[RMDB]
RNA sequence: GGGAACGACUCGAGUAGAGUCGAAAAUACAAUAGCGUAGGGUACCAAGCUAAGAGGUUGGAAGUCCAACGGUAGAGGGCUUGGUUCGCAGCUGCUCUAGAAGAGGUCCCACUCCCUACGCCGCAAACAAUAAUCAAUCGUUCGCGAUUGAUUAUUGAAAAGAAACAACAACAACAAC
Reactivity to DMS in 0.01 (KOAc 150mM, MgCl2 10mM, bicine 150mM(pH8.5), 24C), signal-to-noise 6, nucleotides 027 to 126: u010a110c170a110a080u010a080g020c000g010u000a000g000g000g000u010a040c020c010a020a030g010c020u000a060a100g010a150g010g020u000u000g000g020a260a160g010u000c010c000a000a040c020g010g020u010a100g000a120g000g010g010c000u000u010g000g010u000u010c100g000c080a090g010c070u000g010c010u010c040u000a100g020a080a130g000a060g000g000u000c010c000c010a200c120u000c010c000c000u000a010c020g020c000c130g010c180a060a060a100
Reactivity to 2A3 in 0.01 (KOAc 150mM, MgCl2 10mM, bicine 150mM(pH8.5), 24C), signal-to-noise 5, nucleotides 027 to 126: u190a020c050a040a160u070a160g000c000g000u000a000g010g010g010u010a020c010c020a000a000g030c010u080a110a030g080a070g220g080u030u020g050g070a300a150g100u130c000c000a010a010c020g040g060u130a070g030a100g130g040g000c010u000u010g000g000u030u040c040g000c010a040g030c030u110g030c020u040c020u070a180g050a270a010g020a100g030g020u030c020c000c000a020c020u030c000c000c000u000a000c010g030c010c020g010c060a090a100a030